An RNA of 177 nucleotides, treated with 2A3 and DMS and read out base by base. The DMS profile rests on 907 reads. The data come from the RNA Mapping Database (RMDB), library OK2TRN.
[RMDB]
RNA sequence: GGGAACGACUCGAGUAGAGUCGAAAACUUGCAAUAACGUCUCAAUAUAAUGAUUGCGUAUACGCUCCAUCUCUCGACGAACAGAUACAGCCCCUACUUGUUCAGCAACUUGAUCACGUAAACUCGAGCAGGGAAGAGAAUUCGUUCUCUUCCCUGCAAAAGAAACAACAACAACAAC
Reactivity to 2A3 in 0.01 (KOAc 150mM, MgCl2 10mM, bicine 150mM(pH8.5), 24C), signal-to-noise 1, nucleotides 027 to 126: c100u070u180g060c090a090a090u080a120a020c000g090u010c010u020c080a040a060u240a040u090a260a120u130g100a050u060u240g030c010g000u110a040u040a180c020g040c040u110c010c000a090u000c040u000c010u030c040g170a120c000g040a080a070c040a100g030a050u100a210c000a090g020c010c030c020c030u010a060c040u010u050g050u100u020c000a010g000c000a060a070c030u040u020g020a010u030c030a010c090g000u090a090a020a000c090u000c020g000a000
Reactivity to DMS in 0.01 (KOAc 150mM, MgCl2 10mM, bicine 150mM(pH8.5), 24C), signal-to-noise 2, nucleotides 027 to 126: c010u010u010g040c090a090a040u000a100a080c110g000u000c080u000c030a090a070u020a110u030a170a060u000g000a110u000u000g010c010g030u000a100u000a070c210g000c040u010c020c040a040u000c000u010c020u000c070g050a130c110g000a030a040c100a040g020a140u000a080c090a030g000c040c030c040c050u000a030c010u000u000g010u000u000c060a110g000c050a080a060c060u000u000g000a110u010c040a090c090g000u000a100a140a090c080u000c020g000a300
The RNA was probed in 150 mM KOAc, 10 mM MgCl2 and 150 mM bicine (pH 8.5) at 24 C. Values are in units of 0.01, from 0 to 300, in steps of 10. For 2A3, 599 sequencing reads were counted.